[RMDB]
RNA sequence: GGGAACGACUCGAGUAGAGUCGAAAAGUGAGAUGCGCAUUGAGUCUGACAAAGCGUGGCAGGAGCUUAAGAACGACUCGAAGAACAAGGACCUCUCGCGGCUACCGACGAGUCUGGACGCAAGUGCCGAUAAUCCCCGGUUCGCCGGGGAUUAUCGAAAAGAAACAACAACAACAAC
Reactivity to 2A3 in 0.01 (KOAc 150mM, MgCl2 10mM, bicine 150mM(pH8.5), 24C), signal-to-noise 5, nucleotides 027 to 126: g120u100g000a060g010a060u070g020c030g000c100a040u060u110g010a020g040u000c010u100g060a020c020a040a080a010g010c020g010u090g060g020c030a050g020g080a070g010c010u070u080a130a030g030a090a000c060g010a010c000u020c020g020a080a040g010a070a000c140a080a060g070g020a070c010c000u050c000u010c040g060c030g020g000c010u040a060c030c050g050a060c030g000a020g040u010c010u050g010g000a030c040g030c060a080a030g040u060g120c020
Reactivity to DMS in 0.01 (KOAc 150mM, MgCl2 10mM, bicine 150mM(pH8.5), 24C), signal-to-noise 3, nucleotides 027 to 126: g000u030g010a120g020a060u030g020c140g000c060a100u010u000g000a090g010u000c000u010g040a200c130a050a030a040g000c090g000u020g000g020c050a040g000g000a250g000c010u000u000a040a080g040a050a220c210g000a040c010u000c010g010a090a110g010a090a040c170a080a090g000g000a160c080c030u000c100u000c070g020c130g000g000c040u010a050c040c010g000a120c070g000a050g000u000c000u000g000g040a100c010g000c080a080a060g000u000g060c060
This 177-nucleotide RNA was probed chemically with 2A3 and DMS.
Conditions: 150 mM KOAc, 10 mM MgCl2 and 150 mM bicine (pH 8.5), 24 C.
Reactivities are given for positions 27 through 126.
The DMS profile rests on 3,890 reads.